[RMDB]
RNA sequence: GGGAACGACUCGAGUAGAGUCGAAAAACUUCAGCAACCGUGUCCUGGCGGUUGGUGGGGUGAACGUGUGUGUGGUCCAUGUCGAUGCGAUCUGGCCCAAGGAUAUCACCCAGACUGCAACAAGACCUCAUCGAAGGAUAUUCGUAUCCUUCGAUGAAAAAGAAACAACAACAACAAC
Reactivity to DMS in 0.01 (KOAc 150mM, MgCl2 10mM, bicine 150mM(pH8.5), 24C), signal-to-noise 6, nucleotides 027 to 126: a020c010u000u000c010a030g000c010a010a010c010c010g020u000g010u000c070c060u000g010g010c000g000g000u000u000g010g000u000g000g010g000g010u010g000a080a090c150g030u010g010u020g010u010g030u000g020g010u000c010c030a070u000g000u000c060g010a170u010g020c030g000a030u000c060u000g010g010c060c030c040a090a080g010g010a100u010a060u010c090a100c110c040c020a040g000a060c030u000g010c030a080a070c140a100a100g000a070c110c090
Reactivity to 2A3 in 0.01 (KOAc 150mM, MgCl2 10mM, bicine 150mM(pH8.5), 24C), signal-to-noise 4, nucleotides 027 to 126: a010c010u020u030c010a080g050c000a020a020c000c010g000u020g070u080c050c060u080g100g020c000g010g000u010u010g000g060u030g000g030g010g020u030g060a140a040c120g030u070g020u020g000u020g060u060g140g040u010c020c020a050u090g010u030c050g090a090u120g070c040g030a060u020c010u010g030g030c000c020c000a020a010g080g020a060u070a040u240c030a040c010c000c000a020g010a050c020u060g010c020a040a000c000a030a120g030a060c000c010